[RMDB]
RNA sequence: GGGAACGACUCGAGUAGAGUCGAAAAGGGCAAAAGAUUCCAGAGGAUUCUCUAUAGGGGCUCUGAAUCCCCAGAGCAUUUCCUUCUAUCCCUACAGUGAUGAUGUUUGCAGGGGAUGAUGGAACGCUGCGUAUAGUACAUUCGUGUACUAUACGCAAAAAGAAACAACAACAACAAC
Reactivity to 2A3 in 0.01 (KOAc 150mM, MgCl2 10mM, bicine 150mM(pH8.5), 24C), signal-to-noise 2, nucleotides 027 to 126: g030g000g000c040a090a110a060a070g030a070u090u050c050c010a060g080a070g170g050a210u260u060c050u020c040u070a110u240a300g060g000g100g030c000u000c020u050g000a050a030u000c030c000c000c020a020g010a010g050c000a030u000u060u050c000c000u030u000c010u050a040u020c010c000c010u040a050c090a050g080u040g090a080u060g040a040u130g140u140u160u110g030c060a080g000g010g000g000a010u020g010a000u000g000g010a000a000c010g030c080
Reactivity to DMS in 0.01 (KOAc 150mM, MgCl2 10mM, bicine 150mM(pH8.5), 24C), signal-to-noise 4, nucleotides 027 to 126: g020g000g000c100a090a080a130a100g000a110u000u000c050c020a120g010a120g010g010a090u000u010c010u000c050u000a170u010a140g020g020g010g010c050u000c020u000g000a130a100u000c020c010c010c090a060g000a030g010c030a090u010u000u000c010c010u000u000c030u000a080u000c010c000c000u000a080c090a060g010u000g000a070u010g010a140u010g010u000u000u000g000c040a090g010g000g000g000a030u000g000a030u000g020g000a020a010c300g020c100